Record summary
This 177-nucleotide RNA was probed chemically with DMS and 2A3.
[RMDB]
RNA sequence: GGGAACGACUCGAGUAGAGUCGAAAAGCCGCAAUCGGUGCCGGUCGUCACCGAACUGCCGGGCCGCACCAGUGCCUUCCUGGUCGCCCAGGUGCGGGCACGGGUCGACGGUAUCGUGCUGCGUCGCCGAAUACGAUCAGUUCGCUGAUCGUAUUCGAAAAGAAACAACAACAACAAC
Reactivity to DMS in 0.01 (KOAc 150mM, MgCl2 10mM, bicine 150mM(pH8.5), 24C), signal-to-noise 3, nucleotides 027 to 126: g010c060c020g010c020a040a090u000c010g010g000u000g020c010c000g000g020u010c040g000u010c010a060c030c020g020a180a060c050u010g000c020c030g000g000g000c210c120g000c160a040c010c020a030g000u030g010c080c060u000u030c100c010u000g000g010u010c090g000c060c010c000a070g020g020u050g010c030g010g000g000c030a060c020g000g010g000u000c020g000a060c010g000g000u000a020u000c020g010u000g000c110u010g000c040g010u000c060g000c160
Reactivity to 2A3 in 0.01 (KOAc 150mM, MgCl2 10mM, bicine 150mM(pH8.5), 24C), signal-to-noise 9, nucleotides 027 to 126: g030c020c000g000c010a020a060u060c000g010g000u010g010c010c010g130g210u040c010g010u010c010a070c140c000g010a050a040c030u020g000c000c010g000g020g010c060c070g010c040a000c000c000a010g030u080g130c020c060u090u130c030c010u010g000g010u050c020g030c010c010c010a100g050g070u150g040c040g000g020g000c130a020c000g000g000g010u020c010g000a030c000g000g000u020a030u030c020g010u040g040c050u050g000c000g050u070c040g000c040
Source: RMDB libraries RFM100 and RFMREP, as collected in RNAgym. DMS adducts were read by reverse transcription with MarathonRT.